[RMDB]
RNA sequence: GGGAACGACUCGAGUAGAGUCGAAAAAUGAGUCCAGGAUCUGUGUAUAAGGUUGGAUUCUAACUGUCUGUACAUCAGCGUAUAUACGCAAAGUCUUGUGUUUUCUCGUAAUUAUUUUUGCCUAAGCGGUGAGCUGCUAUUUCGAUAGCAGCUCACCAAAAGAAACAACAACAACAAC
Reactivity to 2A3 in 0.01 (KOAc 150mM, MgCl2 10mM, bicine 150mM(pH8.5), 24C), signal-to-noise 1, nucleotides 027 to 126: a000u090g050a000g080u040c000c010a000g120g020a130u060c020u170g030u000g060u000a060u000a220a140g040g090u000u090g140g000a140u090u000c000u000a070a060c020u010g200u120c020u120g010u010a010c000a050u030c070a150g000c000g040u020a030u070a050u020a300c000g000c010a130a010a000g050u000c000u060u140g030u010g120u130u010u080u040c000u000c050g030u030a160a160u020u080a120u000u120u000u090u120g020c000c000u030a090a060g110c070

The record gives the reactivity of an RNA of 177 nucleotides to 2A3. The RNA was probed in 150 mM KOAc, 10 mM MgCl2 and 150 mM bicine (pH 8.5) at 24 C.